About this RNA: Chemical mapping of a 177-nucleotide RNA with DMS and 2A3. The RNA was probed in 150 mM KOAc, 10 mM MgCl2 and 150 mM bicine (pH 8.5) at 24 C. DMS adducts were read by reverse transcription with MarathonRT. For DMS, 3,313 sequencing reads were counted. 2A3 adducts were read by reverse transcription with SuperScript II with manganese.
[RMDB]
RNA sequence: GGGAACGACUCGAGUAGAGUCGAAAAGAUAUGGACGGCUUGGGAGUGGUUCGGAAACGAACCAAGCAUCGAUCAAGGCCGUCCUAAGUCAAACACUGUCGAGGAGCUUCGGCUCCUCGACAGUGAAUCAAAAUAGUUACUUCGGUAACUAUUUUGAAAAAGAAACAACAACAACAAC
Reactivity to DMS in 0.01 (KOAc 150mM, MgCl2 10mM, bicine 150mM(pH8.5), 24C), signal-to-noise 3, nucleotides 027 to 126: g000a050u010a300u000g000g000a010c000g000g010c000u010u000g010g000g000a270g030u000g010g020u000u000c000g010g000a110a080a200c000g000a010a000c000c000a030a050g000c150a090u020c080g010a190u000c060a040a020g010g010c000c010g000u000c000c000u000a010a060g010u000c040a190a110a190c010a010c020u000g000u000c000g020a050g000g000a010g000c000u000u000c160g040g030c010u000c000c000u010c000g000a000c000a000g020u000g000a040a080
Reactivity to 2A3 in 0.01 (KOAc 150mM, MgCl2 10mM, bicine 150mM(pH8.5), 24C), signal-to-noise 1, nucleotides 027 to 126: g020a010u040a030u100g000g010a000c000g000g000c010u020u020g040g000g050a080g060u050g010g000u000u000c020g000g000a070a090a000c010g000a000a000c030c010a000a000g070c030a210u260c070g090a060u130c080a040a040g160g100c010c000g010u000c000c000u000a000a000g020u010c010a010a050a010c000a000c000u030g010u010c040g000a000g000g000a000g000c000u050u090c280g230g020c030u060c000c000u030c000g000a000c030a000g000u000g010a000a000